[RMDB]
RNA sequence: GGGAACGACUCGAGUAGAGUCGAAAAGAUAUUAACGCGCGUGCUGUGUCUAACGCGAAUUACCCAGUUAUUUUCGACUUUACUCGAGUCGUUAUAGCGUGUUAUGACACAGUUAUCCGCGAACGAACAUGCAACUAUAGUUCGCUAUAGUUGCAUGAAAAGAAACAACAACAACAAC
Reactivity to 2A3 in 0.01 (KOAc 150mM, MgCl2 10mM, bicine 150mM(pH8.5), 24C), signal-to-noise 2, nucleotides 027 to 126: g060a020u160a040u230u230a190a080c030g000c000g000c020g060u050g020c000u010g000u000g000u050c020u040a020a000c000g010c050g000a060a160u140u060a070c000c020c000a020g090u150u100a200u100u060u010u010c010g010a010c000u020u010u000a010c000u010c000g000a000g000u000c020g000u000u000a020u010a000g000c000g000u000g000u000u000a020u070g000a010c000a010c000a020g000u030u110a090u090c040c010g020c040g020a060a040c040g020a020a000
Reactivity to DMS in 0.01 (KOAc 150mM, MgCl2 10mM, bicine 150mM(pH8.5), 24C), signal-to-noise 4, nucleotides 027 to 126: g000a140u010a090u010u000a080a120c090g030c010g000c160g010u000g000c010u010g010u000g010u000c010u000a030a010c010g010c000g000a100a050u000u000a140c040c050c050a170g000u000u000a060u000u000u000u000c010g010a020c000u000u000u000a020c020u010c010g000a010g010u000c000g000u000u010a030u010a090g020c030g010u000g020u000u000a030u000g000a010c010a010c010a040g000u000u010a070u010c180c010g010c030g010a080a120c190g000a060a150
An RNA of 177 nucleotides, treated with 2A3 and DMS and read out base by base.
The data come from the RNA Mapping Database (RMDB), library M2PK90.
Reactivities are rounded to 0.1 and cut off at 0 and 3.
DMS adducts were read by reverse transcription with MarathonRT.
For DMS, 5,383 sequencing reads were counted.
Conditions: 150 mM KOAc, 10 mM MgCl2 and 150 mM bicine (pH 8.5), 24 C.
High 2A3 reactivity points to a flexible backbone, as in loops and unpaired stretches.